[RMDB]
RNA sequence: GGGAACGACUCGAGUAGAGUCGAAAAGUAAGAGGGACCUUAUUUAAAAUAAAAGUACUACCACAAACAAAGCCUAUGGUGUGUUCUAUUCUUAGUUAGGUGUCCGAUCGUUUGGUUGCCUCCACGUCAUUAUAAUAGGCUUCGGCCUAUUAUAAUGAAAAGAAACAACAACAACAAC
Reactivity to 2A3 in 0.01 (KOAc 150mM, MgCl2 10mM, bicine 150mM(pH8.5), 24C), signal-to-noise 1, nucleotides 027 to 126: g040u030a020a020g020a080g040g010g000a020c000c000u020u030a050u010u160u080a130a140a100a120u140a000a150a030a030g010u030a020c000u040a030c000c040a010c050a030a190a040c020a040a280a000g060c000c010u070a050u080g020g060u030g000u000g020u060u000c030u050a110u040u050c020u010u100a020g020u030u010a020g060g000u040g120u070c040c000g040a080u020c090g080u020u030u100g070g000u060u070g030c010c000u010c050c000a100c000g040u010
Reactivity to DMS in 0.01 (KOAc 150mM, MgCl2 10mM, bicine 150mM(pH8.5), 24C), signal-to-noise 2, nucleotides 027 to 126: g030u010a070a120g010a080g000g010g010a050c030c000u000u000a020u000u010u000a030a040a050a060u020a020a070a080a090g010u000a060c020u000a050c020c000a060c140a090a090a100c110a110a110a160g000c140c070u010a080u000g000g010u000g000u000g000u000u000c040u000a060u010u010c090u010u000a010g000u000u000a030g010g000u000g000u020c010c030g000a090u000c050g000u000u000u000g000g000u010u000g010c030c010u000c010c060a090c220g000u000